[RMDB]
RNA sequence: GGGAACGACUCGAGUAGAGUCGAAAAGCUUGUAGCUUCGGCUACAAGCAUCUAAAAUCAGCGGUAAAUAAUUACGAGGCGUUACCGCUGAACGGCUCGAUACAACCACAUCAUUCGUGAUGUGGAAUUCACGUUGGAAGUUCGCUUCCAACGUGAAAAAAGAAACAACAACAACAAC
Reactivity to DMS in 0.01 (KOAc 150mM, MgCl2 10mM, bicine 150mM(pH8.5), 24C), signal-to-noise 1, nucleotides 027 to 126: g000c000u000u000g000u000a000g000c010u000u020c270g020g010c030u010a000c000a000a000g000c010a020u000c080u020a080a010a080a150u000c030a000g000c000g020g020u000a000a040a060u000a180a160u000u010a110c120g000a060g020g000c190g000u000u000a010c060c000g010c010u000g000a000a130c110g000g000c090u010c060g000a240u020a150c170a190a260c010c000a000c000a000u000c000a040u000u010c130g000u000g000a020u000g010u010g000g000a030a030
Reactivity to 2A3 in 0.01 (KOAc 150mM, MgCl2 10mM, bicine 150mM(pH8.5), 24C), signal-to-noise 1, nucleotides 027 to 126: g020c000u010u030g000u000a010g000c000u000u000c280g140g010c000u030a010c000a000a020g020c000a000u000c020u050a080a050a040a090u000c000a020g000c020g000g010u060a020a000a040u120a090a140u240u220a140c060g070a070g130g050c070g050u030u030a030c000c000g000c000u000g010a000a020c050g020g010c000u000c060g030a020u030a160c030a040a100c050c000a000c000a010u020c000a010u000u100c150g140u050g000a000u000g000u010g010g090a000a010